Conditions: 150 mM KOAc, 10 mM MgCl2 and 150 mM bicine (pH 8.5), 24 C.
Structure probing data (2A3) for a 207-nucleotide construct.
For 2A3 the reverse transcriptase was SuperScript II with manganese.
For 2A3, 909 sequencing reads were counted.
[RMDB]
RNA sequence: GGGAACGACUCGAGUAGAGUCGAAAAAGGGCCGCGGUGCUCUGGAGUAGAGGCUCUGCCUUCGAAACACCAUCGAUCCUCCCUUCUUCUUUACCUUCUUCUGGCUCUUCCGAUGAGACGCGACCGGUGGCAUCGCCUCUCGGUUCGUCCCAACCUGCCAUCGUGAGAUGUUCGCAUCUCACGAUGGAAAAGAAACAACAACAACAAC
Reactivity to 2A3 in 0.01 (KOAc 150mM, MgCl2 10mM, bicine 150mM(pH8.5), 24C), signal-to-noise 1, nucleotides 027 to 156: a000g030g010g000c090c030g030c020g050g000u000g010c000u000c000u060g000g000a060g000u030a010g000a000g020g000c040u020c200u300g010c110c000u200u240c010g000a010a010a000c000a030c080c090a000u000c030g010a070u050c000c020u020c000c000c000u060u040c020u050u020c000u140u150u080a110c010c020u070u060c020u030u030c030u120g000g050c020u000c000u090u020c020c000g100a140u120g020a030g000a040c050g000c030g060a040c000c030g060g010u030g060g030c050a250u180c170g000c000c000u030c080u160c000g040g000u000u040c000g010u010c000c000c000a020a110c000c040u060g050